[RMDB]
RNA sequence: GGGAACGACUCGAGUAGAGUCGAAAAUUUAACGGACGCUUUCGCGAUGAAUGCCUGAAUGAACACUGGUUCAGUGACGUCAGUCAUGCCAGGAAAACCAUCAGUGAAUGGCGUCAGGAUUAUAAUGGCGUAAUACAUUGUUCGCAAUGUAUUACGCAAAAGAAACAACAACAACAAC
Reactivity to 2A3 in 0.01 (KOAc 150mM, MgCl2 10mM, bicine 150mM(pH8.5), 24C), signal-to-noise 5, nucleotides 027 to 126: u040u030u030a060a030c020g050g010a010c000g000c000u030u000u000c000g000c010g010a000u010g010a050a030u170g060c000c010u020g050a070a080u050g010a070a010c070a040c210u180g180g030u130u100c040a010g030u020g090a020c020g060u130c060a060g000u010c010a020u050g080c040c000a020g000g000a000a060a020a050c020c010a000u000c030a040g020u000g030a030a040u080g020g000c000g000u010c010a000g080g000a030u150u150a070u140a160a180u210g120
Reactivity to DMS in 0.01 (KOAc 150mM, MgCl2 10mM, bicine 150mM(pH8.5), 24C), signal-to-noise 5, nucleotides 027 to 126: u010u000u000a070a120c060g010g010a010c010g030c000u000u000u000c010g030c030g000a020u020g010a170a140u010g000c010c000u000g000a180a210u000g000a010a020c050a260c260u010g020g000u000u010c040a140g000u000g010a040c050g010u030c300a040g010u000c010a010u000g010c230c020a010g000g010a030a030a090a120c300c000a000u000c000a090g060u000g010a040a020u010g030g000c000g010u000c010a020g010g000a110u000u000a070u000a060a100u000g010